[RMDB]
RNA sequence: GGGAACGACUCGAGUAGAGUCGAAAAGAUAUGGAGCAUAGCCAGCCUUCUAGUCGUUGAAAUCGGAAACGAUGGAGACUUCUAGGCGCUAUGCUCCUAAGUCAAAACGAGUGCUUCGGCACUCGAAGAUCGCAUGUAAGUUCGCUUACAUGCGAUCAAAAGAAACAACAACAACAAC
Reactivity to DMS in 0.01 (KOAc 150mM, MgCl2 10mM, bicine 150mM(pH8.5), 24C), signal-to-noise 2, nucleotides 027 to 126: g020a090u010a300u010g000g010a000g000c010a000u000a000g000c040c150a250g000c000c020u000u000c030u010a010g030u010c010g040u000u000g010a110a150a040u000c010g000g000a120a050a220c000g000a010u000g000g000a120g010a010c000u000u000c020u000a000g030g010c000g000c010u000a000u000g000c000u010c000c000u000a010a070g010u000c020a090a060a110a160c020g000a010g010u000g000c000u000u010c200g010g000c000a000c000u010c010g000a040a030
Reactivity to 2A3 in 0.01 (KOAc 150mM, MgCl2 10mM, bicine 150mM(pH8.5), 24C), signal-to-noise 1, nucleotides 027 to 126: g020a010u070a020u230g010g010a000g020c000a020u000a010g000c030c170a060g010c080c000u070u080c060u040a030g010u040c000g100u170u050g000a030a030a000u010c010g000g050a040a050a030c010g000a000u010g000g010a030g000a010c000u040u000c030u020a020g000g010c010g000c000u000a000u000g000c000u000c000c000u000a000a000g000u020c010a000a000a000a130c010g000a000g000u010g010c010u050u100c290g190g000c020a000c010u010c000g000a000a020

Source information
Chemical mapping of a 177-nucleotide RNA with DMS and 2A3. Conditions: 150 mM KOAc, 10 mM MgCl2 and 150 mM bicine (pH 8.5), 24 C. For DMS the reverse transcriptase was MarathonRT. The DMS profile rests on 1,656 reads. The data come from the RNA Mapping Database (RMDB), library TTRDEL. DMS (dimethyl sulfate) methylates the pairing face of unpaired adenines and cytosines. Reactivities are rounded to 0.1 and cut off at 0 and 3.